[RMDB]
RNA sequence: GGGAACGACUCGAGUAGAGUCGAAAAGAUAUGGACCGAACUACGGAUGAAGUGGUCGUUGAAAUCGGAAACGAUGGAGACCAUGGAGGUCCGCGGUCCUAAGUCAAAAGUGUUCUUCGGAACACAAGUGCGUCAUAAAGUUCGCUUUAUGACGCACAAAAGAAACAACAACAACAAC
Reactivity to DMS in 0.01 (KOAc 150mM, MgCl2 10mM, bicine 150mM(pH8.5), 24C), signal-to-noise 1, nucleotides 027 to 126: g000a030u000a300u000g010g000a050c000c000g000a090a050c180u040a300c000g000g010a000u010g010a300a260g030u000g000g000u000c000g030u020u010g000a080a150a010u000c000g000g000a060a070a250c050g050a020u000g080g020a080g020a000c010c000a020u030g000g000a210g000g040u000c000c000g000c020g000g010u000c000c000u000a040a060g000u000c030a040a120a000a120g000u000g040u030u000c000u000u000c280g000g060a010a010c000a010c010a030a040
Reactivity to 2A3 in 0.01 (KOAc 150mM, MgCl2 10mM, bicine 150mM(pH8.5), 24C), signal-to-noise 1, nucleotides 027 to 126: g050a030u020a080u150g010g000a010c010c020g020a100a080c100u140a050c250g000g020a000u080g040a170a010g020u010g000g020u050c030g070u240u060g050a050a050a010u010c040g000g050a100a010a010c000g010a010u010g010g030a040g000a000c020c010a010u070g000g020a060g110g250u000c010c000g020c010g000g000u000c000c000u010a080a030g060u020c010a030a040a070a140g010u010g020u010u040c000u000u110c250g110g010a000a000c000a010c000a020a010